[RMDB]
RNA sequence: GGGAACGACUCGAGUAGAGUCGAAAAGUCGAAGGGGCACACGAACGGCUGUGGGAUCCAACGGAUAUCGACGAGCCGAAGUUGAAGCGACUCAUCAAAAACAUGAUCCGGACGCUCCGUCGAAAAGAGGUCGCGCUGAAGCCGAAGGAAACUGCCGGGUGUUAUCAAUGUUCGCAUUGAUAACACCAAAAGAAACAACAACAACAAC
Reactivity to DMS in 0.01 (KOAc 150mM, MgCl2 10mM, bicine 150mM(pH8.5), 24C), signal-to-noise 1, nucleotides 027 to 156: g010u000c030g000a100a120g000g050g040g030c050a030c050a110c050g020a070a110c040g010g010c010u020g060u000g010g000g010a120u000c060c000a040a190c060g000g030a090u010a130u020c030g010a050c040g000a080g000c000c000g000a060a130g020u020u010g000a140a150g040c000g040a010c010u000c000a050u000c030a010a050a070a100a100c040a140u010g030a140u000c030c090g040g000a170c100g030c040u000c030c020g020u000c070g000a150a050a070a170g010a080g030g010u000c060g010c070g000c030u010g020a130a120g010c010c010g030a140a080g010g010a060a000a010c140u000g010c020c050g000
Reactivity to 2A3 in 0.01 (KOAc 150mM, MgCl2 10mM, bicine 150mM(pH8.5), 24C), signal-to-noise 3, nucleotides 027 to 156: g070u040c030g020a040a020g000g020g000g040c040a040c000a000c050g060a160a010c030g020g020c030u010g020u050g060g050g010a020u000c020c010a050a080c040g050g000a040u030a040u200c010g020a010c020g010a010g000c000c020g030a060a020g050u150u190g080a070a020g040c040g050a030c040u010c080a060u050c030a050a100a060a020a080c030a070u080g010a050u030c040c010g070g000a020c020g010c010u030c040c080g010u000c010g010a030a040a040a020g080a030g000g030u020c010g000c010g000c150u040g020a080a020g000c000c010g020a030a010g010g000a040a110a040c020u050g020c050c010g050